[RMDB]
RNA sequence: GGGAACGACUCGAGUAGAGUCGAAAAUAGAUAAAAAGGACUAAACAUCUCCACCAUGAAAAAGUGAUGUGAAUUUCACUACUAAAUUCUUGUCUUAAGUCGAAAUUAAGCCGCUAUUACAAGCUUCCUCAACUCCGUACUUCGGUACGGAGUUGAGAAAAGAAACAACAACAACAAC
Reactivity to 2A3 in 0.01 (KOAc 150mM, MgCl2 10mM, bicine 150mM(pH8.5), 24C), signal-to-noise 1, nucleotides 027 to 126: u040a000g030a000u260a100a140a000a010a000g240g000a000c000u050a000a000a000c070a000u040c000u180c000c030a070c000c000a010u120g120a090a080a120a120a000g090u030g050a050u010g030u060g080a070a070u080u080u090c010a010c080u160a010c000u050a010a090a180u120u000c010u070u050g000u020c020u130u000a040a000g040u010c010g000a000a090a180u090u000a060a060g050c050c010g040c120u100a000u140u050a040c050a020a000g050c020u050u070c000
The record gives the reactivity of an RNA of 177 nucleotides to 2A3. It was measured as part of the RMDB library OK1LIB. For 2A3 the reverse transcriptase was SuperScript II with manganese.